[RMDB]
RNA sequence: GGGAACGACUCGAGUAGAGUCGAAAAACAAACGAUGAGCUCGGUAGAAAGUUUAUAUAACAGUAGGAAGAAAUACAAACAGGAUGUAGAAUAUCCCCACUUUUAUGUUGAUAGACAUAAUAUUUGGGAAUACGAUCUUAUUCGUAAGAUCGUAUUCAAAAGAAACAACAACAACAAC
Reactivity to 2A3 in 0.01 (KOAc 150mM, MgCl2 10mM, bicine 150mM(pH8.5), 24C), signal-to-noise 5, nucleotides 027 to 126: a000c040a020a090a000c040g050a060u080g000a010g030c010u010c050g050g040u050a040g080a070a110a010g010u060u110u040a210u030a030u030a080a070c020a040g080u080a010g090g020a070a060g030a040a130a020u150a040c060a040a140a000c020a020g090g020a030u050g040u080a050g050a150a030u050a050u100c010c010c000c000a040c000u060u070u000u000a010u020g000u000u020g080a170u080a140g040a010c010a010u050a030a030u100a090u060u070u040g060g000
Reactivity to DMS in 0.01 (KOAc 150mM, MgCl2 10mM, bicine 150mM(pH8.5), 24C), signal-to-noise 6, nucleotides 027 to 126: a090c120a090a100a110c070g010a070u010g000a260g010c020u000c050g020g010u000a060g010a080a080a100g000u010u000u000a050u010a080u000a080a090c060a050g010u010a050g000g000a060a060g000a090a060a080u000a030c070a040a070a100c110a070g000g000a050u000g010u000a060g000a110a090u010a110u000c030c010c000c050a050c100u000u000u000u000a010u000g000u000u000g000a130u020a100g000a020c010a010u000a020a020u010a050u000u000u000g010g010
Structure probing data (2A3 and DMS) for a 177-nucleotide construct.
It was measured as part of the RMDB library OK2TST.
For DMS, 6,918 sequencing reads were counted.
The reactions ran in a buffer of 150 mM KOAc, 10 mM MgCl2 and 150 mM bicine (pH 8.5), at 24 C.